[RMDB]
The record gives the reactivity of an RNA of 177 nucleotides to DMS and 2A3.
RNA sequence: GGGAACGACUCGAGUAGAGUCGAAAACGUAUCCUUGAGCCUUCUGAUACUCCCGGCACAGACGAUCAACCGCUUCGACAAGGGAGUUGAACAUGUUCACCGCCAGCUCAACGUCCGAUUUGUAGCCACCUACUACUUUCUUCGGAAAGUAGUAGGUAAAAGAAACAACAACAACAAC
Reactivity to DMS in 0.01 (KOAc 150mM, MgCl2 10mM, bicine 150mM(pH8.5), 24C), signal-to-noise 8, nucleotides 027 to 126: c160g010u000a070u000c020c060u000u010g010a120g020c050c040u010u000c060u000g000a130u010a050c030u000c010c020c010g010g020c110a110c110a060g000a080c070g000a090u010c130a100a110c120c070g000c070u000u000c060g010a080c110a120a130g000g010g010a060g010u000u000g000a060a100c100a070u000g010u000u000c040a080c060c060g010c050c040a060g010c060u000c040a050a070c090g010u000c020c020g000a140u000u000u000g010u010a100g010c060c090
Reactivity to 2A3 in 0.01 (KOAc 150mM, MgCl2 10mM, bicine 150mM(pH8.5), 24C), signal-to-noise 4, nucleotides 027 to 126: c020g040u050a040u060c030c000u000u070g040a040g030c010c020u060u050c050u080g020a040u030a070c000u010c000c010c000g040g000c070a080c020a060g080a040c030g040a060u060c020a030a120c070c040g080c110u090u080c050g080a070c030a050a060g000g020g020a040g010u010u040g010a000a010c030a070u100g030u060u060c030a010c060c030g030c000c000a020g000c020u020c040a020a040c020g060u000c030c000g060a090u020u020u210g120u040a030g000c010c000

For DMS, 10,364 sequencing reads were counted. Conditions: 150 mM KOAc, 10 mM MgCl2 and 150 mM bicine (pH 8.5), 24 C. The 2A3 profile rests on 6,830 reads. The data come from the RNA Mapping Database (RMDB), library OK2TST. Values cover nucleotides 27 to 126.